Notes
Conditions: 150 mM KOAc, 10 mM MgCl2 and 150 mM bicine (pH 8.5), 24 C. The record gives the reactivity of an RNA of 177 nucleotides to DMS and 2A3. Source: RMDB library OK2TST, as collected in RNAgym. For 2A3 the reverse transcriptase was SuperScript II with manganese.
RNA sequence: GGGAACGACUCGAGUAGAGUCGAAAAUAUCAACGCCCACAUGUACUAAGACAUCCAAGCCAUCUUCGGAGGUGAUGGCAAGUGCGUGAUUUUGCCCAUUAACUACGGCGAUGCGUCCGGUUACGGGUCUCUAGUAGUCAUUCGUGACUACUAGAGAAAAAGAAACAACAACAACAAC
Reactivity to DMS in 0.01 (KOAc 150mM, MgCl2 10mM, bicine 150mM(pH8.5), 24C), signal-to-noise 9, nucleotides 027 to 126: u010a070u010c100a080a080c160g010c010c020c040a240c110a040u010g010u000a100c070u000a100a130g010a070c060a040u000c060c160a110a190g010c020c010a040u000c040u010u000c140g010g000a100g010g010u000g000a020u000g000g010c040a050a030g020u000g010c040g010u000g000a090u000u010u010u000g000c020c010c010a110u000u000a030a060c040u000a080c070g010g000c050g010a090u000g010c120g010u010c020c030g010g000u000u000a090c180g000g000g010
Reactivity to 2A3 in 0.01 (KOAc 150mM, MgCl2 10mM, bicine 150mM(pH8.5), 24C), signal-to-noise 7, nucleotides 027 to 126: u190a030u090c040a030a070c060g030c010c030c000a040c010a020u050g010u030a020c010u100a090a120g090a070c020a050u030c030c040a120a000g030c030c010a130u010c050u240u250c190g190g010a080g090g060u140g020a020u020g000g000c010a010a010g010u020g010c010g000u020g110a110u030u110u130u120g030c010c000c000a040u100u090a040a030c040u120a050c080g020g000c030g050a090u170g080c050g040u040c010c000g020g000u000u020a020c040g020g020g050